Structure probing data (2A3 and DMS) for a 177-nucleotide construct. The 2A3 profile rests on 1,643 reads. Conditions: 150 mM KOAc, 10 mM MgCl2 and 150 mM bicine (pH 8.5), 24 C. It was measured as part of the RMDB library M2PK90. High 2A3 reactivity points to a flexible backbone, as in loops and unpaired stretches.
RNA sequence: GGGAACGACUCGAGUAGAGUCGAAAAUACAAUAGCGUAGGGAACCAAGCUAAGAGGUUGGAAGUCCAACGGUAGAGGGCUUGGUUCGCAGCUGCUCUAGAAGAGGUCCCACACCCUACGCCGCAAAGACAACUAGUUUCUUCGGAAACUAGUUGUCAAAAGAAACAACAACAACAAC
Reactivity to 2A3 in 0.01 (KOAc 150mM, MgCl2 10mM, bicine 150mM(pH8.5), 24C), signal-to-noise 2, nucleotides 027 to 126: u240a030c100a050a080u090a130g010c000g000u010a010g000g000g000a000a000c000c010a010a000g000c000u090a130a030g090a060g270g070u020u000g040g090a280a180g110u090c000c010a010a000c010g050g040u090a070g010a090g180g000g000c000u010u000g000g010u000u000c050g000c010a020g040c040u090g020c010u030c040u050a140g050a290a010g010a120g040g010u000c030c000c000a000c010a010c020c000c000u000a000c010g010c000c030g060c110a030a090a050
Reactivity to DMS in 0.01 (KOAc 150mM, MgCl2 10mM, bicine 150mM(pH8.5), 24C), signal-to-noise 2, nucleotides 027 to 126: u000a080c190a100a090u060a080g010c000g040u000a040g010g000g000a070a020c010c000a000a010g000c010u000a090a100g000a100g000g010u000u000g010g020a220a240g000u040c010c020a010a020c000g010g000u000a130g020a150g010g010g000c000u000u000g020g000u000u000c060g040c100a050g000c080u000g040c010u000c070u000a150g000a140a120g000a100g030g010u010c000c000c010a160c120a140c110c000c000u010a020c020g000c010c110g020c210a070a100a100